[RMDB]
RNA sequence: GGGAACGACUCGAGUAGAGUCGAAAAGAUAUGGAUGAUAUAUCGAGCUCCCGGUCGGAAACGACCGAUGAGCCCAGACAGUAUGAUCAUCCUAAGUCAAACCACAGGGUCUUCGGACCCUGUGGAACAUCUGUUAUUACUUCGGUAAUAACAGAUGAAAAGAAACAACAACAACAAC
Reactivity to 2A3 in 0.01 (KOAc 150mM, MgCl2 10mM, bicine 150mM(pH8.5), 24C), signal-to-noise 3, nucleotides 027 to 126: g000a010u030a010u070g000g000a010u010g010a010u020a000u010a030u130c120g060a130g020c010u010c010c030c000g000g010u000c000g000g010a000a020a040c010g000a010c000c010g000a060u090g000a010g000c020c020c040a090g100a190c030a010g040u050a020u200g300a100u120c000a000u000c010c000u000a040a000g000u000c050a130a090a140c010c010a000c000a000g050g000g000u020c000u170u280c300g170g000a000c060c010c000u000g000u000g000g000a000a010
Reactivity to DMS in 0.01 (KOAc 150mM, MgCl2 10mM, bicine 150mM(pH8.5), 24C), signal-to-noise 4, nucleotides 027 to 126: g000a040u010a250u010g000g000a010u000g010a010u000a040u000a090u000c120g010a110g000c000u000c000c250c000g000g000u000c000g010g000a090a080a160c000g000a000c010c010g000a010u010g000a020g020c000c280c170a110g020a140c300a160g010u000a030u010g000a040u000c000a010u000c000c000u000a030a150g010u000c030a100a140a290c010c010a010c000a010g010g000g010u000c000u000u010c250g010g000a010c010c000c010u000g010u000g000g010a050a080